[RMDB]
This 177-nucleotide RNA was probed chemically with DMS and 2A3. The RNA was probed in 150 mM KOAc, 10 mM MgCl2 and 150 mM bicine (pH 8.5) at 24 C. DMS adducts were read by reverse transcription with MarathonRT. It was measured as part of the RMDB library TTRDEL. For 2A3, 13,214 sequencing reads were counted.
RNA sequence: GGGAACGACUCGAGUAGAGUCGAAAAGAUAUGGAUCACACGGGAGACGAGUCGGAAACGAUGGCGUCGAGGAUCGUGUUGAUCCUAAGUCAAAACUGAACCGUGCUGUUCGCAGCACGGUUCAGAAGUACUUUAUGUAGUUCGCUACAUAAAGUACAAAAGAAACAACAACAACAAC
Reactivity to DMS in 0.01 (KOAc 150mM, MgCl2 10mM, bicine 150mM(pH8.5), 24C), signal-to-noise 4, nucleotides 027 to 126: g000a040u010a300u000g000g010a010u000c000a030c010a010c000g000g000g020a070g010a030c000g010a300g010u000c010g000g000a090a080a130c000g000a010u000g000g000c020g020u000c010g010a100g010g000a040u010c000g000u010g010u010u000g010a000u000c000c000u000a010a070g010u000c020a080a080a100a180c000u000g000a010a010c000c000g000u000g000c000u000g010u010u010c240g020c010a000g000c010a010c000g000g000u000u000c010a000g000a040a090
Reactivity to 2A3 in 0.01 (KOAc 150mM, MgCl2 10mM, bicine 150mM(pH8.5), 24C), signal-to-noise 4, nucleotides 027 to 126: g000a000u060a010u140g000g010a000u010c000a000c000a000c010g020g020g020a090g010a010c020g000a000g010u020c000g020g030a040a050a030c020g000a010u120g300g160c030g020u010c010g010a110g040g040a070u070c000g000u010g020u080u170g000a000u000c000c000u000a040a010g020u000c030a010a010a110a180c000u000g000a010a000c000c000g020u020g000c000u010g030u160u110c300g020c140a000g000c000a000c000g000g000u000u000c000a010g000a000a000